[RMDB]
RNA sequence: GGGAACGACUCGAGUAGAGUCGAAAAGAUAUGGAUCACUGCGCACAGGACUACAUCGGAAACGAUGUAGAGAACCUGUGAACUACGCAAAUCCUAAGUCAAACCCAGUACCUUCGGGUACUGGGAAGUACCAGUAAUCGUUCGCGAUUACUGGUACAAAAGAAACAACAACAACAAC
Reactivity to 2A3 in 0.01 (KOAc 150mM, MgCl2 10mM, bicine 150mM(pH8.5), 24C), signal-to-noise 3, nucleotides 027 to 126: g030a020u080a030u220g010g000a010u000c010a010c080u010g010c020g040c000a000c000a010g000g120a130c020u000a000c010a020u010c000g010g030a020a060a020c010g000a010u000g010u000a020g000a020g030a050a070c000c000u000g000u000g000a000a020c080u150a000c020g010c010a080a250a000u010c010c000u020a220a000g070u060c050a060a010a160c000c000c000a000g000u010a010c010c020u040u110c300g160g000g000u000a000c000u000g020g000g000a010a010
Reactivity to DMS in 0.01 (KOAc 150mM, MgCl2 10mM, bicine 150mM(pH8.5), 24C), signal-to-noise 4, nucleotides 027 to 126: g010a060u000a300u000g010g000a020u000c020a060c040u000g000c000g030c000a020c000a010g000g010a220c000u000a000c000a010u000c000g000g000a130a090a230c000g010a010u000g010u000a010g000a100g020a140a070c020c000u010g000u000g000a040a020c160u020a300c010g010c000a020a050a000u000c000c000u000a040a130g010u000c040a100a130a220c000c000c000a000g000u000a010c000c000u000u010c230g020g010g010u010a000c000u000g000g000g000a000a020